This 177-nucleotide RNA was probed chemically with DMS and 2A3. The reactions ran in a buffer of 150 mM KOAc, 10 mM MgCl2 and 150 mM bicine (pH 8.5), at 24 C. For DMS the reverse transcriptase was MarathonRT. The 2A3 profile rests on 3,099 reads.
RNA sequence: GGGAACGACUCGAGUAGAGUCGAAAAGAUAUGGAGAAGCUCCCCACCGCUGUUAGGCGCAGAUAUCGGAAACGAUGUAGCCUUUCAGCGAGGCUUCUCCUAAGUCAAAGGACGCUUCGGCGUCCAAUCCAUUAUGAACCUUCGGGUUCAUAAUGGAAAAAGAAACAACAACAACAAC
Reactivity to DMS in 0.01 (KOAc 150mM, MgCl2 10mM, bicine 150mM(pH8.5), 24C), signal-to-noise 3, nucleotides 027 to 126: g000a020u000a120u020g000g000a000g010a010a010g000c010u000c130c020c020c050a300c080c010g000c020u030g010u000u000a020g010g020c010g000c270a100g010a140u010a030u010c000g010g000a050a060a070c000g010a000u000g000u000a170g010c010c000u000u000u000c000a020g010c000g000a020g010g000c000u000u000c000u000c000c010u000a000a030g000u020c070a040a080a150g000g010a020c000g020c000u000u020c180g030g000c000g010u000c000c000a020a040
Reactivity to 2A3 in 0.01 (KOAc 150mM, MgCl2 10mM, bicine 150mM(pH8.5), 24C), signal-to-noise 2, nucleotides 027 to 126: g020a050u120a080u180g000g000a000g010a010a000g000c000u070c030c030c000c030a010c020c000g010c010u030g000u000u040a000g030g000c000g010c160a070g110a300u210a000u200c020g010g010a080a040a020c000g020a000u040g130u180a090g020c000c000u000u000u010c010a000g000c020g000a000g010g000c000u000u000c000u030c000c000u000a000a000g020u030c080a030a050a300g000g000a000c000g000c030u070u170c290g170g000c000g000u040c010c000a000a010